[RMDB]
RNA sequence: GGGAACGACUCGAGUAGAGUCGAAAAGAGGAUUCAACGAGCUUCGUAGCAACGAUAGCAACGUAGCUUUUGCUACGACCCGAGCUAUCGAGGGCAGCUACGUCCCGUGCUCGAGGGCAGAAUCCGACGUGGUAUGACCAUUCGUGGUCAUACCACGAAAAGAAACAACAACAACAAC
Reactivity to 2A3 in 0.01 (KOAc 150mM, MgCl2 10mM, bicine 150mM(pH8.5), 24C), signal-to-noise 2, nucleotides 027 to 126: g170a000g000g000a050u040u000c020a040a050c020g060a020g010c030u050u050c010g000u080a000g000c000a040a050c010g010a020u010a010g040c050a060a070c030g030u000a000g020c050u140u270u260u300g020c010u020a000c000g040a030c010c010c020g020a010g000c010u030a000u010c000g010a140g050g070g050c080a050g080c000u060a020c000g040u050c000c000c020g060u090g000c020u010c010g010a120g060g060g010c060a050g020a020a000u000c000c000g000a020
Reactivity to DMS in 0.01 (KOAc 150mM, MgCl2 10mM, bicine 150mM(pH8.5), 24C), signal-to-noise 2, nucleotides 027 to 126: g000a210g040g000a000u000u000c020a220a090c070g030a050g000c070u000u030c020g020u000a040g020c020a090a180c090g000a030u000a030g040c000a090a240c030g000u040a000g000c000u000u020u020u010g000c000u000a000c000g000a100c060c120c110g000a130g020c010u010a030u000c010g010a130g010g010g020c100a090g000c000u000a040c020g000u000c090c020c100g010u040g010c000u000c020g030a080g030g030g000c200a150g000a010a000u010c000c000g030a110